[RMDB]
RNA sequence: GGGAACGACUCGAGUAGAGUCGAAAACCAACUGGCUGAAGGAGUUGCAGUGUGUCUGCCUAUCUACACUUGCUGUGCAGAAUAACCUCCAACCUGUACAGCAGGCACAGACAGGCAGAUAGACGUCCUAACGGUAUACCUUCGGGUAUACCGUUAGAAAAGAAACAACAACAACAAC
Reactivity to DMS in 0.01 (KOAc 150mM, MgCl2 10mM, bicine 150mM(pH8.5), 24C), signal-to-noise 3, nucleotides 027 to 126: c030c000a090a110c140u010g000g000c040u010g020a110a110g010g020a160g000u010u010g030c060a070g010u000g000u000g020u000c000u000g010c000c020u010a040u000c000u010a130c240a130c000u000u000g010c010u010g020u010g010c000a020g010a100a130u000a070a210c060c010u010c030c030a120a110c150c000u000g010u010a010c030a010g000c000a000g010g000c110a300c220a030g010a030c050a010g010g010c010a000g000a010u000a030g000a070c040g000u000c050

Chemical mapping of a 177-nucleotide RNA with DMS.
It was measured as part of the RMDB library RFMREP.